An RNA of 207 nucleotides, treated with DMS and 2A3 and read out base by base. The data come from the RNA Mapping Database (RMDB), library OK3TST. The RNA was probed in 150 mM KOAc, 10 mM MgCl2 and 150 mM bicine (pH 8.5) at 24 C. For 2A3 the reverse transcriptase was SuperScript II with manganese. The DMS profile rests on 4,498 reads.
[RMDB]
RNA sequence: GGGAACGACUCGAGUAGAGUCGAAAAGGCUACGUGCUGGUGCCGGUGGAGCCGACUGAAGCGAUGUUGGAGGCUGGUGGAGAUGUAGAGCAGAUCCACAUUGAGUGGGGUGUGGACCCGUAUGUUGAGAACACUUCAGAGGUAUGGAGAGCGAUGCCGAAGCCUAUAUUUUCGAAUAUAGGCUUCGAAAAGAAACAACAACAACAAC
Reactivity to DMS in 0.01 (KOAc 150mM, MgCl2 10mM, bicine 150mM(pH8.5), 24C), signal-to-noise 2, nucleotides 027 to 156: g010g000c020u000a090c100g030u000g010c020u000g020g040u010g030c010c020g060g050u010g010g020a240g050c040c020g010a150c020u000g010a110a080g010c060g030a110u000g020u000u000g030g020a130g000g030c060u000g010g040u010g020g000a090g050a090u010g000u010a060g010a150g020c040a060g000a120u000c020c020a050c040a080u000u000g020a080g030u000g000g020g030g000u000g030u010g000g010a110c020c000c020g040u000a050u010g030u000u000g010a170g010a080a060c050a040c040u000u000c030a090g010a080g020g020u010a100u000g010g010a060g010a120g050c040g020a100u000g010c080
Reactivity to 2A3 in 0.01 (KOAc 150mM, MgCl2 10mM, bicine 150mM(pH8.5), 24C), signal-to-noise 3, nucleotides 027 to 156: g050g000c020u040a040c100g060u060g070c040u040g020g050u050g060c040c010g000g040u040g020g050a010g010c050c010g040a040c040u070g040a080a020g020c020g070a050u070g030u100u060g030g020a040g040g000c030u030g020g020u010g010g020a080g010a050u060g050u200a020g020a010g040c010a000g010a060u030c000c010a010c030a020u060u110g020a030g030u040g000g000g000g010u050g000u010g020g020a060c030c010c000g020u090a050u100g040u070u050g050a050g010a100a000c040a010c060u060u030c020a020g020a030g070g000u060a070u100g030g000a030g000a010g030c040g020a010u040g020c020